[RMDB]
RNA sequence: GGGAACGACUCGAGUAGAGUCGAAAACUCCACGCUGGGUAAUGGACGACGGCGGCGUGUGGUGAACAGGGAUACCGGUAGUCAGUGUCUGGAACAUCCCAAGGGGCGGCGGAGCUAGCACCCCGACAAAACGGGCACAAGUUCGCUUGUGCCCGAACCACACCUUCAUGUUCGCAUGAAGGUGUGGAAAAGAAACAACAACAACAAC
Reactivity to 2A3 in 0.01 (KOAc 150mM, MgCl2 10mM, bicine 150mM(pH8.5), 24C), signal-to-noise 2, nucleotides 027 to 156: c020u020c020c000a010c010g030c040u030g030g000g080u160a160a140u100g110g000a000c030g000a010c020g090g100c000g000g000c000g000u060g030u060g000g060u010g030a120a100c090a130g030g000g030a020u020a080c030c000g010g030u060a060g050u050c050a030g020u000g050u100c050u070g020g000a070a090c030a040u020c040c030c010a060a040g020g000g000g000c080g000g010c030g000g100a090g140c010u000a000g000c020a060c010c020c010c010g000a000c000a000a090a040a020c000g000g000g000c000a000c000a000a000g020u030u090c200g060c160u000u010g010u010g000c030c000c000g000a000a000